This 207-nucleotide RNA was probed chemically with 2A3. Values cover nucleotides 27 to 156. Conditions: 150 mM KOAc, 10 mM MgCl2 and 150 mM bicine (pH 8.5), 24 C.
RNA sequence: GGGAACGACUCGAGUAGAGUCGAAAAAUACUCGGAAACGUGGUAAAGCCAUUGCAGCUGUUUUCAUGGUAGACGGAUUGUGUCCGUGCUCUGGGUACAGGACAGGGCCACAAUCGCAAGUCCCGAGUCCAUAUGAACAAUAGCGAGACACUGGAUAGCUUUGUCCCUAGUUCGCUAGGGACAAAGCAAAAGAAACAACAACAACAAC
Reactivity to 2A3 in 0.01 (KOAc 150mM, MgCl2 10mM, bicine 150mM(pH8.5), 24C), signal-to-noise 1, nucleotides 027 to 156: a040u140a010c020u070c010g000g060a030a130a080c040g080u060g010g020u230a170a090a000g000c010c030a040u140u140g050c120a020g000c030u040g020u080u050u010u040c050a040u110g000g010u030a090g000a080c020g000g000a000u000u000g000u000g020u000c020c080g140u000g000c010u010c000u020g140g000g040u300a060c010a030g010g000a050c010a010g040g010g000c000c000a010c000a000a010u000c020g050c160a050a050g010u060c000c010c050g000a040g010u000c000c000a040u020a010u150g020a050a030c040a110a060u050a040g000c010g050a000g030a070c070a000c060u090g010g030a160u080a060